[RMDB]
Chemical mapping of a 177-nucleotide RNA with 2A3 and DMS. For 2A3 the reverse transcriptase was SuperScript II with manganese. It was measured as part of the RMDB library OK2TST. For 2A3, 1,095 sequencing reads were counted.
RNA sequence: GGGAACGACUCGAGUAGAGUCGAAAACAAUUAUGUACUUGUGAGGGGAAUGGAAGUCAUGUGGUUCCUCUGGGAAAUAUUCACUUUGCUUCUAAUCGGGAAGCCCCGUGGCCUACAUUUAACGCGAAUUGAUCACCAAGUUCGCUUGGUGAUCAAUAAAAGAAACAACAACAACAAC
Reactivity to 2A3 in 0.01 (KOAc 150mM, MgCl2 10mM, bicine 150mM(pH8.5), 24C), signal-to-noise 2, nucleotides 027 to 126: c020a040a000u220u070a170u300g090u070a080c060u190u070g030u040g130a080g010g000g000g030a020a020u050g000g000a020a020g000u020c010a000u060g050u080g000g000u000u000c000c020u030c090u060g080g000g060a010a090a020u210a070u110u060c040a030c120u000u120u120g050c010u000u060c020u050a240a230u200c070g060g000g000a060a060g000c000c010c020c000g020u000g000g000c010c000u020a010c020a020u070u090u040a140a040c090g010c000g030a020
Reactivity to DMS in 0.01 (KOAc 150mM, MgCl2 10mM, bicine 150mM(pH8.5), 24C), signal-to-noise 3, nucleotides 027 to 126: c070a110a150u010u000a080u000g000u000a090c080u010u000g010u000g000a120g020g000g010g010a070a050u000g010g020a100a180g000u000c040a040u000g010u000g000g000u000u000c010c010u010c150u010g010g020g000a010a070a080u010a100u010u000c220a060c170u010u010u000g010c090u000u000c040u010a070a120u020c220g000g010g000a050a040g000c010c020c040c040g010u010g010g010c030c020u010a140c020a030u000u000u000a020a100c150g020c140g000a060